[RMDB]
RNA sequence: GGGAACGACUCGAGUAGAGUCGAAAAGAAAAUAAGAGCGUAAUCGCGUCUUGACGUGAGUGAGCCCACACGAAGAGCUAUCCCAAGUGGGAUAUCAUAGCUCACAAUACGCUAAGAUUCGUGUGAAACUACUACCAGCAUUCGUGCUGGUAGUAGUAAAAGAAACAACAACAACAAC
Reactivity to DMS in 0.01 (KOAc 150mM, MgCl2 10mM, bicine 150mM(pH8.5), 24C), signal-to-noise 4, nucleotides 027 to 126: g030a090a060a040a110u040a060a090g000a040g020c010g010u000a070a260u030c020g020c010g000u000c030u020u020g010a020c010g020u000g000a050g010u000g000a050g020c020c180c050a090c000a010c010g000a020a030g010a070g020c100u000a020u000c000c000c000a300a200g060u080g000g000g000a020u000a010u000c130a160u020a060g000c000u010c000a050c060a070a090u010a050c020g010c000u020a040a050g010a170u000u010c030g020u000g020u000g000a200a070
Reactivity to 2A3 in 0.01 (KOAc 150mM, MgCl2 10mM, bicine 150mM(pH8.5), 24C), signal-to-noise 4, nucleotides 027 to 126: g060a000a050a020a030u230a100a030g010a010g030c010g010u030a020a060u020c000g000c000g040u020c130u120u210g110a020c000g030u030g000a020g020u030g010a020g000c000c030c000a020c000a010c010g010a030a020g010a020g090c020u010a010u040c000c000c020a180a190g160u300g120g000g000a010u040a000u020c070a050u080a020g000c000u040c000a010c000a000a070u110a020c030g000c000u050a070a060g090a200u030u060c010g000u020g000u000g060a100a000